[RMDB]
RNA sequence: GGGAACGACUCGAGUAGAGUCGAAAACGCCGGUAAUGGAGAGCAUGCGAAAGGAUGGGGACCGUACGGAAACCAUCCCCAUCCGAAACGUACGAACCCAUCCGAAACGUACGACUCGUCCCAUCCGAAACGUACGGAUAAUAUCAACCGCUGACUCUACUCUAUCUGGAUUCGUCCAGAUAGAGUAAAAAGAAACAACAACAACAAC
Reactivity to DMS in 0.01 (KOAc 150mM, MgCl2 10mM, bicine 150mM(pH8.5), 24C), signal-to-noise 1, nucleotides 027 to 156: c060g030c010c020g100g040u020a120a140u000g040g030a300g040a170g000c020a100u000g000c060g000a190a180a290g040g000a020u000g020g030g010g020a080c080c040g020u000a300c060g010g000a130a150a110c090c040a090u000c000c000c000c050a060u040c050c050g020a040a130a040c060g030u020a020c020g020a080a160c020c000c010a010u000c050c010g030a030a050a130c010g020u010a060c090g000a050c050u000c000g000u000c020c000c030a130u000c040c010g000a090a060a070c060g000u010a090c060g000g000a170u000a030a120u020a140u020c000a080a090c040c000g030c050u020g030a100c080u010c020
Reactivity to 2A3 in 0.01 (KOAc 150mM, MgCl2 10mM, bicine 150mM(pH8.5), 24C), signal-to-noise 3, nucleotides 027 to 156: c050g020c060c010g000g040u130a050a030u050g030g010a070g000a000g080c080a040u200g010c050g020a120a040a020g000g000a010u000g000g010g000g000a020c060c090g060u130a070c050g060g040a110a090a030c030c040a080u060c020c010c010c010a030u010c000c000g000a000a040a000c000g000u010a010c040g010a020a050c000c000c000a010u030c000c000g050a110a030a070c010g000u010a000c030g070a090c020u000c020g060u050c040c000c000a020u040c030c010g030a110a120a160c070g030u150a050c000g010g030a020u080a130a100u120a110u090c060a020a080c060c020g050c070u070g050a080c020u010c010